[RMDB]
RNA sequence: GGGAACGACUCGAGUAGAGUCGAAAACACGACGCACGGUCUCCGACGUGGUGACGCCUAUUCGUGACAAAACGGCACGAGGGCUGAGCGAGCGCAUCGCCGUGGAGUGUGGGCGUCGCAGGGCGGAGGAUUACCUGCCCUUCGGGGCAGGUAAUCCAAAAGAAACAACAACAACAAC
Reactivity to 2A3 in 0.01 (KOAc 150mM, MgCl2 10mM, bicine 150mM(pH8.5), 24C), signal-to-noise 1, nucleotides 027 to 126: c010a020c040g040a010c070g000c080a040c010g050g090u080c030u000c020c000g080a070c030g080u080g020g020u030g040a000c000g030c000c000u080a130u080u090c050g030u040g090a040c010a000a170a000a010c050g110g050c020a000c010g030a050g030g120g000c070u070g080a070g150c050g090a030g080c100g000c050a070u080c030g020c010c010g020u070g000g060a010g000u170g010u050g010g010g010c010g020u000c000g040c030a020g040g080g030c030g000g080a040
Reactivity to DMS in 0.01 (KOAc 150mM, MgCl2 10mM, bicine 150mM(pH8.5), 24C), signal-to-noise 1, nucleotides 027 to 126: c020a090c040g000a080c100g000c050a020c040g050g000u000c000u000c080c020g020a080c100g000u000g010g020u000g000a110c070g050c000c010u000a060u000u000c070g020u010g020a080c110a020a140a190a050c150g010g000c000a110c150g000a090g050g010g030c000u000g000a180g030c110g000a050g000c020g030c030a050u000c020g000c020c020g050u080g000g010a280g010u000g030u000g000g000g000c020g000u000c050g000c030a190g010g010g020c020g010g010a120

Chemical mapping of a 177-nucleotide RNA with 2A3 and DMS. For 2A3 the reverse transcriptase was SuperScript II with manganese. Reactivities are given for positions 27 through 126. Source: RMDB library OK2TST, as collected in RNAgym. For DMS the reverse transcriptase was MarathonRT. The reactions ran in a buffer of 150 mM KOAc, 10 mM MgCl2 and 150 mM bicine (pH 8.5), at 24 C.